[RMDB]
RNA sequence: GGGAACGACUCGAGUAGAGUCGAAAAUUACCGCCCAGGAUGGGGUGCAGCGUUCCUGCAAUAUCCAGGGCAUCUAGGUGCAGCCUUGUAGUUUUAGUGGACUUUAGGCUAAAGAAUUUCACUAGCAAAAAUCUUUAAGGGUUCGCCCUUAAAGAAACGUUUACUAUAAGUUCGCUUAUAGUAAACGAAAAGAAACAACAACAACAAC
Reactivity to DMS in 0.01 (KOAc 150mM, MgCl2 10mM, bicine 150mM(pH8.5), 24C), signal-to-noise 1, nucleotides 027 to 156: u010u000a090c040c010g000c000c000c000a110g000g030a050u000g010g010g020g010u010g000c060a050g020c080g040u000u010c100c000u010g000c040a040a130u000a050u000c010c020a090g040g010g090c040a030u020c020u040a020g000g030u000g050c110a160g000c040c020u000u000g020u010a070g020u000u000u000u010a050g070u020g030g000a040c040u000u000u000a090g010g020c050u000a070a040a150g000a040a170u000u000u000c030a020c040u000a050g000c080a010a070a090a110a070u000c010u000u000u000a010a010g010g030g070u000u000c300g020c010c000c000u010u000a000a000a020g000a000a040a090
Reactivity to 2A3 in 0.01 (KOAc 150mM, MgCl2 10mM, bicine 150mM(pH8.5), 24C), signal-to-noise 4, nucleotides 027 to 156: u080u020a030c000c010g010c000c000c000a000g000g010a000u030g010g060g030g150u050g000c000a010g010c020g100u140u150c020c000u000g000c010a020a030u020a010u140c010c010a010g000g000g000c000a020u050c050u070a040g100g000u060g070c030a000g010c010c000u050u080g070u110a040g020u020u030u060u060a040g010u050g030g010a010c000u060u060u020a000g000g000c010u010a050a080a030g050a030a040u070u170u210c030a020c010u060a010g030c040a030a080a100a130a230u010c000u000u000u010a010a000g040g000g020u040u090c160g070c000c000c000u000u000a000a000a000g000a010a000a000
An RNA of 207 nucleotides, treated with DMS and 2A3 and read out base by base. Conditions: 150 mM KOAc, 10 mM MgCl2 and 150 mM bicine (pH 8.5), 24 C. 2A3 is a SHAPE reagent: it acylates the 2'-hydroxyl of flexible nucleotides of all four kinds. For DMS the reverse transcriptase was MarathonRT.